The data come from the RNA Mapping Database (RMDB), library RFMREP. The record gives the reactivity of an RNA of 177 nucleotides to DMS and 2A3. Reactivities are given for positions 27 through 126. The reactions ran in a buffer of 150 mM KOAc, 10 mM MgCl2 and 150 mM bicine (pH 8.5), at 24 C.

[RMDB]
RNA sequence: GGGAACGACUCGAGUAGAGUCGAAAACACCUGAAGUGACUGAAGUUAGUCCGGUUUAGGUAUGAGAAUGAUUGGAGCACCUCUCCAGAUGUUCCAGAUGUAAUGAAACCGGUGCAAGCUUCAAGCUCUGAGCUAUAUACUUCGGUAUAUAGCUCAGAAAAGAAACAACAACAACAAC
Reactivity to DMS in 0.01 (KOAc 150mM, MgCl2 10mM, bicine 150mM(pH8.5), 24C), signal-to-noise 1, nucleotides 027 to 126: c190a220c020c030u010g030a120a120g010u010g010a120c140u000g000a030a020g040u010u000a260g030u000c000c010g000g000u010u000u000a030g020g000u000a060u010g010a170g010a050a030u000g000a090u000u000g010g020a010g010c270a120c300c210u010c140u000c120c140a070g000a010u000g000u000u000c010c020a020g000a120u000g010u010a080a070u010g010a030a020a060c010c010g010g010u010g010c010a020a030g000c000u000u000c010a010a180g030c100u000
Reactivity to 2A3 in 0.01 (KOAc 150mM, MgCl2 10mM, bicine 150mM(pH8.5), 24C), signal-to-noise 2, nucleotides 027 to 126: c070a060c000c020u090g070a110a030g100u040g070a020c060u030g000a010a010g010u020u030a020g020u030c000c000g030g010u010u030u090a120g000g050u120a060u160g210a230g040a130a060u100g040a080u110u070g000g000a020g030c050a050c070c000u120c010u000c050c000a020g030a070u070g000u010u000c000c000a000g020a080u090g050u140a200a040u070g100a020a000a010c000c010g000g060u120g010c000a000a040g000c020u030u010c010a010a010g030c020u020